[RMDB]
RNA sequence: GGGAACGACUCGAGUAGAGUCGAAAACUAGCUAGUACAUGCAUGACACUCGGAUCCGCAUCAUGAUCGAUCUGUAGCGAUCCAGGUACUCACUCAUGCAUGACACAUGAUACAUGGUACCUGAUCCCCUCUUGACACGGUUCGCCGUGUCAAGAGGAAAAGAAACAACAACAACAAC
Reactivity to DMS in 0.01 (KOAc 150mM, MgCl2 10mM, bicine 150mM(pH8.5), 24C), signal-to-noise 2, nucleotides 027 to 126: c030u000a070g020c060u000a060g030u000a090c060a030u000g010c030a040u000g060a070c220a150c050u000c140g050g010a050u000c000c070g000c070a100u000c100a020u000g040a170u010c090g020a100u020c110u000g000u030a110g040c110g010a010u000c030c000a020g020g000u000a030c130u010c090a220c110u000c000a010u000g000c020a050u000g000a070c170a070c050a070u000g000a030u020a100c150a140u010g010g010u000a030c030c000u000g010a230u030c060c020
Reactivity to 2A3 in 0.01 (KOAc 150mM, MgCl2 10mM, bicine 150mM(pH8.5), 24C), signal-to-noise 2, nucleotides 027 to 126: c030u040a020g080c050u060a020g000u010a140c020a000u030g010c000a030u030g000a010c040a030c080u020c020g050g000a060u000c040c070g000c000a050u050c030a060u110g070a130u080c030g040a100u000c020u110g100u110a030g020c020g070a010u000c000c060a000g120g030u040a010c020u080c120a080c030u020c000a010u020g000c010a030u020g010a000c000a000c010a060u040g020a000u100a140c020a090u130g020g040u040a030c020c020u040g050a110u080c050c020